[RMDB]
RNA sequence: GGGAACGACUCGAGUAGAGUCGAAAAAGGCCUACUGUCAGAUUAAAUCUGAACUACUACAAAUGAACAGAUACUUAGUCCAGCUCGACUUCAUCUCCUUUAUAAAAUUCAACUCGUUGUCGUUCUGCUACGCAGCCCUGUUCGCAGGGCUGCGUAGAAAAGAAACAACAACAACAAC
Reactivity to 2A3 in 0.01 (KOAc 150mM, MgCl2 10mM, bicine 150mM(pH8.5), 24C), signal-to-noise 3, nucleotides 027 to 126: a010g010g010c000c000u010a030c030u070g040u060c010a030g000a050u160u150a110a050a130u060c010u000g000a080a060c040u080a030c020u020a000c050a120a180a140u120g020a090a010c020a020g010a050u130a060c030u080u080a000g040u060c000c000a030g040c030u020c020g040a050c000u020u010c090a120u020c060u070c000c080u020u170u030a100u110a120a110a050a040u200u140c060a030a020c000u000c010g100u100u040g000u010c000g000u000u010c000u000g010